An RNA of 177 nucleotides, treated with DMS and read out base by base.
The reactions ran in a buffer of 150 mM KOAc, 10 mM MgCl2 and 150 mM bicine (pH 8.5), at 24 C.
Source: RMDB library OK2TRN, as collected in RNAgym.
The DMS profile rests on 711 reads.
RNA sequence: GGGAACGACUCGAGUAGAGUCGAAAAUAAGGUUCGUCAAUCCAAAGAUGAGUUUUUACACUACACCACAUGAGUUGGUAACUGCACAAAAUUCAGUUAACUUAUCUAGUGUGCAGGGUUUGUCAAAUCAUCGUUGUCGAUUCGUCGACAACGAUGAAAAAGAAACAACAACAACAAC
Reactivity to DMS in 0.01 (KOAc 150mM, MgCl2 10mM, bicine 150mM(pH8.5), 24C), signal-to-noise 1, nucleotides 027 to 126: u000a030a090g000g000u010u000c010g010u010c010a100a070u020c150c070a050a110a120g000a040u000g010a120g000u030u000u000u020u000a070c140a140c060u000a070c080a060c040c020a030c230a110u000g000a050g000u010u000g000g010u000a070a020c000u000g010c160a070c120a060a070a140a240u000u020c090a010g060u000u000a050a070c070u020u010a080u040c110u000a090g030u000g000u000g010c070a000g010g000g000u000u010u010g000u000c070a020a040a070